[RMDB]
RNA sequence: GGGAACGACUCGAGUAGAGUCGAAAACGCUGGGAGAGGUUCGCACCUGCGAGAUGUUUCAACAGCACUCUGAAGCGCGCACGGAGUGACAUGAAACAUCUCGCCUGUGCGGUCAGCCUCUCCUGUGCUGAAGCGCGCACGGCAACCGAAAGGUGCGGUACUAGCGCGUCUUCGGACGCGCUAGUACAAAAGAAACAACAACAACAAC
Reactivity to 2A3 in 0.01 (KOAc 150mM, MgCl2 10mM, bicine 150mM(pH8.5), 24C), signal-to-noise 2, nucleotides 027 to 156: c060g000c010u000g000g030g000a000g000a010g000g020u150u050c000g030c000a000c000c000u060g020c000g010a000g000a000u000g000u000u000u010c100a150a120c100a070g030c000a020c000u010c000u020g080a230a070g060c060g010c000g020c080a020c020g030g000a010g000u010g060a120c080a190u070g010a000a000a000c000a000u010c000u000c000g020c010c000u010g020u000g000c030g000g040u060c040a010g030c000c000u020c000u000c000c000u000g000u010g000c010u070g050a140a050g010c020g010c000g000c030a020c050g000g030c030a070a060c020c020g110a090a060a020g040g000u020g000c030g010